[RMDB]
RNA sequence: GGGAACGACUCGAGUAGAGUCGAAAAGAAAGAAAGAAAGCCGUGCUUGUCCGGGUUUCGCGACGCUCGAACGCCGUUUACUUUCACAGUCCGUUCGUUGUCGACGAAACCUGCAUAUCGCACGGAAUUACAAUGGUAAGUUCGCUUACCAUUGUAAAAAAGAAACAACAACAACAAC
Reactivity to 2A3 in 0.01 (KOAc 150mM, MgCl2 10mM, bicine 150mM(pH8.5), 24C), signal-to-noise 9, nucleotides 027 to 126: g080a010a040a010g090a030a080a010g090a060a090a000g060c000c000g000u000g000c010u050u040g020u090c100c010g000g000g010u000u000u010c010g020c000g000a000c010g030c100u030c020g000a010a000c000g060c060c010g060u110u110u110a090c060u070u200u260c150a090c050a080g040u050c030c010g000u000u000c010g010u030u080g000u010c020g020a300c000g000a020a000a000c000c000u000g000c000a010u050a030u120c060g000c000a000c000g000g000a000a000
Reactivity to DMS in 0.01 (KOAc 150mM, MgCl2 10mM, bicine 150mM(pH8.5), 24C), signal-to-noise 9, nucleotides 027 to 126: g010a120a080a100g000a110a100a110g000a120a140a160g000c000c000g020u000g000c010u010u000g010u010c210c020g020g000g000u000u000u000c010g010c010g010a010c010g010c130u010c010g000a010a010c010g010c270c130g000u010u030u020a040c090u000u020u030c210a110c210a070g000u010c110c010g010u000u000c010g010u010u010g000u000c000g010a110c020g010a010a010a000c000c000u000g010c290a020u010a030u010c190g000c000a010c000g000g010a020a030